[RMDB]
RNA sequence: GGGAACGACUCGAGUAGAGUCGAAAAGAUAUGGAAACUCGACAUGCUCGGAUGGGUCGGAAACGACCCUGAUGAGCAACAGCGAGGUUUCCUAAGUCAAACAACGUCAAGUUCGCUUGACGUUGAACCAAUUAUAACACUUCGGUGUUAUAAUUGGAAAAGAAACAACAACAACAAC
Reactivity to 2A3 in 0.01 (KOAc 150mM, MgCl2 10mM, bicine 150mM(pH8.5), 24C), signal-to-noise 4, nucleotides 027 to 126: g010a020u110a040u150g000g000a000a010a000c010u010c010g080a080c090a100u090g000c010u000c000g000g020a010u010g000g000g020u010c010g030g000a070a070a030c020g010a010c000c000c000u000g000a000u000g000a000g000c000a000a000c000a010g020c010g010a060g140g030u000u000u000c000c010u020a140a020g060u020c050a050a120a160c010a020a010c010g000u000c010a000a000g010u030u140c250g080c180u010u000g000a000c000g000u000u000g000a000a000
Reactivity to DMS in 0.01 (KOAc 150mM, MgCl2 10mM, bicine 150mM(pH8.5), 24C), signal-to-noise 9, nucleotides 027 to 126: g010a050u000a300u000g000g000a010a000a040c000u000c000g010a060c100a260u000g010c010u010c000g000g000a110u000g000g010g010u000c000g010g000a080a080a220c010g010a010c000c000c000u000g000a300u010g000a010g010c000a010a030c270a150g000c000g000a020g010g010u000u000u010c000c000u000a060a110g010u000c040a120a120a300c010a010a010c000g010u000c000a010a010g010u000u010c250g010c010u000u000g000a020c000g010u010u000g000a070a200
Structure probing data (2A3 and DMS) for a 177-nucleotide construct. The data come from the RNA Mapping Database (RMDB), library TTRDEL. Conditions: 150 mM KOAc, 10 mM MgCl2 and 150 mM bicine (pH 8.5), 24 C. Reactivities are given for positions 27 through 126.